Source: RMDB library OK3TST, as collected in RNAgym.
This 207-nucleotide RNA was probed chemically with 2A3.
The RNA was probed in 150 mM KOAc, 10 mM MgCl2 and 150 mM bicine (pH 8.5) at 24 C.
RNA sequence: GGGAACGACUCGAGUAGAGUCGAAAAGUCACGAGUUGGCCUAGCUGGCCUUCCAUUGCCUCAGCAUGCGAAAGGAUGGGGAGUGAAGAACGAUGGUCACACAUUCUUCCGUACGGAAACCAUCCUGUUCGCUGCCAUCCGAAACGUACGCACGCCGGGCGGCACAAGAUUUCGAUCUUGUGCCGCCAAAAGAAACAACAACAACAAC
Reactivity to 2A3 in 0.01 (KOAc 150mM, MgCl2 10mM, bicine 150mM(pH8.5), 24C), signal-to-noise 2, nucleotides 027 to 156: g120u080c020a000c090g070a110g040u070u010g000g000c020c020u080a110g060c080u110g010g010c010c000u040u010c040c000a150u110u110g070c000c000u130c030a020g020c050a020u160g000c020g040a040a000a010g000g000a000u000g000g000g070g090a070g030u170g030a060a030g020a040a040c050g060a090u080g050g000u190c030a010c000a020c040a300u170u000c010u030u000c010c050g060u150a120c140g030g060a030a060a040c000c000a000u000c000c010u060g040u000u000c000g000c000u020g000c000c000a010u030c000c020g030a080a050a060c040g120u140a070c020g060c080a000c050g060c000c030g030